This 177-nucleotide RNA was probed chemically with 2A3 and DMS. Reactivities are rounded to 0.1 and cut off at 0 and 3. For 2A3 the reverse transcriptase was SuperScript II with manganese. DMS adducts were read by reverse transcription with MarathonRT. Conditions: 150 mM KOAc, 10 mM MgCl2 and 150 mM bicine (pH 8.5), 24 C. Reactivities are given for positions 27 through 126.

[RMDB]
RNA sequence: GGGAACGACUCGAGUAGAGUCGAAAAGGAAAUCAAAAUUAGAGAAGUGAAGGCUGAGAUUAGAAAGGUAAUGAAGGUAGGAUAUUGUCACUGGUUUACGGUAACCACCACCACCAAAAUUAAAAAACUCAAGAUUUAUGUUCGCAUAAAUCUUGAGAAAAGAAACAACAACAACAAC
Reactivity to 2A3 in 0.01 (KOAc 150mM, MgCl2 10mM, bicine 150mM(pH8.5), 24C), signal-to-noise 2, nucleotides 027 to 126: g020g000a020a020a060u090c050a030a020a100a170u240u270a050g020a020g020a280a010g040u030g040a060a030g060g020c020u020g020a020g010a080u000u090a020g100a090a070a000g030g020u080a000a040u100g020a020a030g060g010u020a060g060g050a030u020a040u070u110g070u040c020a010c110u050g090g000u060u110u070a030c010g000g020u030a060a010c010c000a010c030c000a010c010c000a020c000c010a040a090a080a090u130u200a060a110a010a000a030a000
Reactivity to DMS in 0.01 (KOAc 150mM, MgCl2 10mM, bicine 150mM(pH8.5), 24C), signal-to-noise 2, nucleotides 027 to 126: g010g000a070a070a050u000c070a040a050a120a120u010u010a170g010a110g010a060a100g000u010g010a070a040g000g010c060u000g010a090g000a060u020u000a040g010a060a100a070g010g000u000a020a070u000g020a090a040g020g000u000a070g010g010a060u010a080u000u000g010u000c050a050c090u000g020g000u000u010u000a040c100g010g000u000a040a050c060c070a020c020c040a030c080c020a080c060c080a040a060a040a040u000u010a010a070a050a060a030a060